[RMDB]
RNA sequence: GGGAACGACUCGAGUAGAGUCGAAAAGUAGACAAGCAGGUCAAUUACUUGAAGGCAUAUUACAAGAAGACGCGAUAGUUGCUGUAACUGGCGGAUCCACGAUGGCAUGUGUUAGUGAAGCAAUUCAGGCUCCUUAAUCAUUCGUGAUUAAGGAGCCAAAAGAAACAACAACAACAAC
Reactivity to 2A3 in 0.01 (KOAc 150mM, MgCl2 10mM, bicine 150mM(pH8.5), 24C), signal-to-noise 3, nucleotides 027 to 126: g140u080a040g000a040c030a030a130g040c060a030g140g160u020c070a070a200u050u070a060c010u010u090g030a040a010g120g010c020a040u100a050u180u120a010c030a020a030g030a050a040g030a080c060g060c050g090a040u090a050g150u040u010g040c000u000g000u060a010a010c000u000g000g030c020g000g000a000u010c020c000a050c180g110a090u220g010g000c060a060u090g020u000g000u160u050a080g000u040g050a040a000g020c000a000a000u130u090c050a040
Reactivity to DMS in 0.01 (KOAc 150mM, MgCl2 10mM, bicine 150mM(pH8.5), 24C), signal-to-noise 2, nucleotides 027 to 126: g010u010a080g000a010c040a090a080g020c070a040g000g000u000c100a160a100u020u040a060c050u000u000g000a100a240g000g010c070a100u050a060u000u000a160c130a050a040g000a080a050g010a040c030g000c040g000a070u000a030g040u010u000g000c000u040g000u000a080a090c090u000g060g000c010g000g030a020u000c070c040a090c080g000a080u050g000g000c110a110u040g000u000g000u020u000a000g010u000g000a140a100g000c220a020a100u000u000c130a100

Chemical mapping of a 177-nucleotide RNA with 2A3 and DMS.
Conditions: 150 mM KOAc, 10 mM MgCl2 and 150 mM bicine (pH 8.5), 24 C.
For 2A3 the reverse transcriptase was SuperScript II with manganese.
As a SHAPE reagent, 2A3 marks flexible, mostly unpaired nucleotides at the ribose 2'-OH.
DMS adducts were read by reverse transcription with MarathonRT.
Values cover nucleotides 27 to 126.
Source: RMDB library OK1LIB, as collected in RNAgym.